The record gives the reactivity of an RNA of 177 nucleotides to DMS and 2A3. DMS adducts were read by reverse transcription with MarathonRT.
[RMDB]
RNA sequence: GGGAACGACUCGAGUAGAGUCGAAAAGUACUGAGGUUCGCCUCAGUACAAAAGCAGAUCUGAGGCUGCGAGCUCUCUGCCUAACUAGGGAACGCAAUAAAAAAACGUGCAUGUUCGCAUGCACGAAGGAUAGAAUAGCCUUCGGGCUAUUCUAUCCAAAAGAAACAACAACAACAAC
Reactivity to DMS in 0.01 (KOAc 150mM, MgCl2 10mM, bicine 150mM(pH8.5), 24C), signal-to-noise 1, nucleotides 027 to 126: g030u030a010c000u000g020a000g000g010u000u010c250g000c000c000u000c010a000g000u000a010c010a010a030a090a120g000c040a060g010a190u010c040u000g000a140g030g010c050u000g000c020g000a030g000c060u000c030u000c050u000g010c080c080u020a130a070c150u000a090g000g010g000a020a050c030g010c100a080a060u010a010a010a070a070a060a090a260c040g000u000g020c010a030u000g000u020u000c120g010c000a010u000g000c000a030c020g010a020a020
Reactivity to 2A3 in 0.01 (KOAc 150mM, MgCl2 10mM, bicine 150mM(pH8.5), 24C), signal-to-noise 1, nucleotides 027 to 126: g000u010a000c000u000g010a000g000g000u010u060c110g110c030c000u000c000a000g020u010a010c000a000a000a000a020g030c000a010g000a060u040c070u190g040a020g170g040c040u030g020c040g050a050g010c020u000c000u010c020u050g040c000c020u140a190a110c050u100a060g010g010g010a000a050c080g010c170a080a060u300a170a090a020a000a000a000a010c000g000u000g040c010a000u010g010u100u090c290g020c090a000u000g000c010a000c000g000a020a020
Conditions: 150 mM KOAc, 10 mM MgCl2 and 150 mM bicine (pH 8.5), 24 C. The 2A3 profile rests on 1,226 reads.